[RMDB]
Source information
Conditions: 150 mM KOAc, 10 mM MgCl2 and 150 mM bicine (pH 8.5), 24 C. This 177-nucleotide RNA was probed chemically with 2A3 and DMS.
RNA sequence: GGGAACGACUCGAGUAGAGUCGAAAACGUCAAGGAUUCGUCCUUGACGAAAGUCGCGGCUUGAGGGCGUAUACGGCUGCGCACACACACGUCCCUCAAGCCAAACAGGUGGAUUCGUCCACCUGAACAGCCCAUACGUCUUCGGACGUAUGGGCUGAAAAGAAACAACAACAACAAC
Reactivity to 2A3 in 0.01 (KOAc 150mM, MgCl2 10mM, bicine 150mM(pH8.5), 24C), signal-to-noise 1, nucleotides 027 to 126: c020g000u010c000a000a000g000g020a020u050u090c120g070u040c080c010u000u000g000a000c010g010a000a000a010g060u050c040g030c100g100g000c010u010u000g000a000g000g010g000c020g040u030a030u010a100c090g050g020c060u160g100c090g030c050a050c000a000c000a010c010a000c130g150u280c030c000c000u000c000a000a000g000c000c000a000a000a000c010a000g000g010u000g010g010a000u040u030c070g050u030c020c000a010c000c000u000g000a000a010
Reactivity to DMS in 0.01 (KOAc 150mM, MgCl2 10mM, bicine 150mM(pH8.5), 24C), signal-to-noise 1, nucleotides 027 to 126: c010g010u010c010a010a010g000g000a030u000u000c200g030u000c000c000u000u000g000a000c000g000a000a000a090g000u000c270g000c220g000g010c000u000u000g040a000g010g000g010c010g010u000a130u000a030c190g000g000c100u010g030c060g030c070a160c040a070c170a100c150a030c010g000u000c000c000c000u000c000a000a010g040c000c010a000a010a140c030a000g010g000u000g030g000a010u010u010c140g020u000c000c000a010c050c000u050g020a070a180

About this RNA: For DMS the reverse transcriptase was MarathonRT.